[RMDB]
This 177-nucleotide RNA was probed chemically with 2A3 and DMS. The reactions ran in a buffer of 150 mM KOAc, 10 mM MgCl2 and 150 mM bicine (pH 8.5), at 24 C. For DMS the reverse transcriptase was MarathonRT. 2A3 adducts were read by reverse transcription with SuperScript II with manganese. It was measured as part of the RMDB libraries RFM100 and RFMREP.
RNA sequence: GGGAACGACUCGAGUAGAGUCGAAAAGGCCGCUCGUCGGGAAUCGGACACUGGAACUAGUACUCUGGUCAAUGCGGAUUGCCUGUGGCGGUGUUGGCUGGACGACCGAGUGUCGGCGGAUACCUCCGUUUAUAAUUAAUUUCGAUUAAUUAUAAACAAAAGAAACAACAACAACAAC
Reactivity to 2A3 in 0.01 (KOAc 150mM, MgCl2 10mM, bicine 150mM(pH8.5), 24C), signal-to-noise 9, nucleotides 027 to 126: g060g000c010c000g000c030u040c030g180u030c020g020g010g040a030a060u060c020g030g010a010c000a000c050u040g030g070a080a030c030u030a050g050u080a050c030u010c010u040g060g030u110c050a050a040u120g040c020g070g080a110u080u120g040c010c020u180g050u120g060g060c010g000g000u010g010u020u020g030g020c030u060g050g010a010c020g020a020c010c020g030a030g030u070g060u080c010g020g020c010g040g010a030u060a070c000c010u040c030c020
Reactivity to DMS in 0.01 (KOAc 150mM, MgCl2 10mM, bicine 150mM(pH8.5), 24C), signal-to-noise 8, nucleotides 027 to 126: g010g010c000c010g010c020u000c050g010u010c030g010g000g010a180a080u010c030g000g000a040c030a020c010u000g010g010a090a060c090u010a100g010u010a080c150u000c010u000g000g010u020c130a050a080u020g010c020g020g000a080u020u010g010c000c020u010g010u010g010g030c020g000g010u000g010u000u000g000g010c020u020g000g000a030c030g010a250c040c020g000a050g010u010g010u020c030g010g000c010g000g000a080u010a110c040c010u010c120c140